[RMDB]
RNA sequence: GGGAACGACUCGAGUAGAGUCGAAAAGUGGAGUUUACACGCACACAAAGAUGCAUCUCCACCUAUAUGUCCAGAUCAGCUGACACAAUCCACAUGCAUGCAUCCUCACAAGCCACCUACACAGAUCGUGAGGGUGCCUGUUCGCAGGCACCCUCACAAAAGAAACAACAACAACAAC
Reactivity to 2A3 in 0.01 (KOAc 150mM, MgCl2 10mM, bicine 150mM(pH8.5), 24C), signal-to-noise 1, nucleotides 027 to 126: g000u000g160g000a070g000u150u240u030a050c050a030c140g030c000a000c000a000c040a010a090a180g220a000u170g000c010a000u110c100u000c000c000a000c040c030u130a130u000a000u190g050u060c000c040a000g080a300u070c000a000g000c000u110g070a000c000a000c000a080a050u130c080c000a070c000a060u000g030c000a000u140g030c000a030u180c000c000u000c000a130c000a090a050g160c000c070a080c020c020u050a040c000a010c170a300g080a050u170c070